[RMDB]
RNA sequence: GGGAACGACUCGAGUAGAGUCGAAAACUGGGGCGGCGGGUCACCGGUCAGACGGUCCCGUCCCGAGGCGGCGAUCCGUCCGAAUGCGCGCCCCGCGAUGAUUCGCGGCGGUGCUCCGGUAGUUCGAUAAUGCCACUUCGUUCGCGAAGUGGCAUUAAAAAGAAACAACAACAACAAC
Reactivity to 2A3 in 0.01 (KOAc 150mM, MgCl2 10mM, bicine 150mM(pH8.5), 24C), signal-to-noise 1, nucleotides 027 to 126: c000u000g000g000g000g000c090g000g000c080g020g060g010u130c030a030c060c000g090g030u180c000a040g080a130c000g000g080u140c000c050c000g010u080c050c000c020g110a170g040g000c030g030g000c080g010a080u010c010c000g000u000c020c000g090a100a040u120g060c030g040c000g000c040c000c000c000g000c060g010a040u250g020a010u060u240c000g000c000g000g020c160g030g010u020g000c000u000c000c000g080g000u000a080g010u040u000c040g000a020